[RMDB]
RNA sequence: GGGAACGACUCGAGUAGAGUCGAAAAUGUAUUGGCGCAGGUAAAGUUCGUCUUCAUUAUCAUGCUUAUCUGACAGCUGCUUCACGUAAUGAUAGCCAUGCCCGUGCCACGAUGGCUGGCGAACUCACGAACACGAAAGGUUCGCCUUUCGUGUUCGAAAAGAAACAACAACAACAAC
Reactivity to DMS in 0.01 (KOAc 150mM, MgCl2 10mM, bicine 150mM(pH8.5), 24C), signal-to-noise 3, nucleotides 027 to 126: u000g020u000a090u000u000g010g000c020g010c050a030g020g020u010a050a080a080g010u000u000c050g010u000c040u000u000c080a040u010u020a070u000c100a090u020g010c030u000u000a080u010c120u010g020a070c210a070g010c020u000g010c180u000u000c080a050c160g020u000a020a060u000g010a040u020a000g000c020c020a040u000g010c000c030c060g000u000g000c070c050a070c110g010a050u000g000g000c040u020g000g010c010g000a020a060c060u000c150a190
Reactivity to 2A3 in 0.01 (KOAc 150mM, MgCl2 10mM, bicine 150mM(pH8.5), 24C), signal-to-noise 3, nucleotides 027 to 126: u120g020u030a110u070u100g050g000c030g000c070a010g130g050u140a170a180a070g030u090u090c050g030u030c000u060u010c030a030u040u090a050u080c030a070u150g050c010u100u090a080u210c060u070g100a040c070a060g060c000u060g020c000u120u100c080a040c060g070u050a080a010u070g070a040u040a030g000c020c000a040u140g020c000c000c000g010u060g010c030c020a090c070g070a040u070g040g030c050u040g030g000c000g000a020a010c020u020c030a090